The record gives the reactivity of an RNA of 177 nucleotides to DMS. For DMS, 1,408 sequencing reads were counted. The reactions ran in a buffer of 150 mM KOAc, 10 mM MgCl2 and 150 mM bicine (pH 8.5), at 24 C. It was measured as part of the RMDB library OK2TST.
[RMDB]
RNA sequence: GGGAACGACUCGAGUAGAGUCGAAAAUAGUUGUCCUGGUGUAGAUGUAUGGCAAUUGGAGAGGAAGUUACUACCCCCUCAUGUGCAUUGAAAAUUGUCUUUUCUUUUGCAGUAUGGCUAGAGGUUACGAUUAGCGGUCAUUCGUGACCGCUAAUCGAAAAGAAACAACAACAACAAC
Reactivity to DMS in 0.01 (KOAc 150mM, MgCl2 10mM, bicine 150mM(pH8.5), 24C), signal-to-noise 1, nucleotides 027 to 126: u000a100g050u000u000g020u010c020c030u000g010g020u000g020u000a040g030a050u000g000u000a050u000g020g020c040a020a100u000u000g010g030a140g000a060g000g010a060a070g000u010u000a080c100u020a160c150c020c020c000c030u000c020a080u000g000u000g000c050a050u000u000g000a030a020a030a030u000u020g030u020c160u000u000u000u010c020u000u010u010u000g020c000a050g010u000a050u010g010g020c070u000a050g010a070g000g020u000u000a080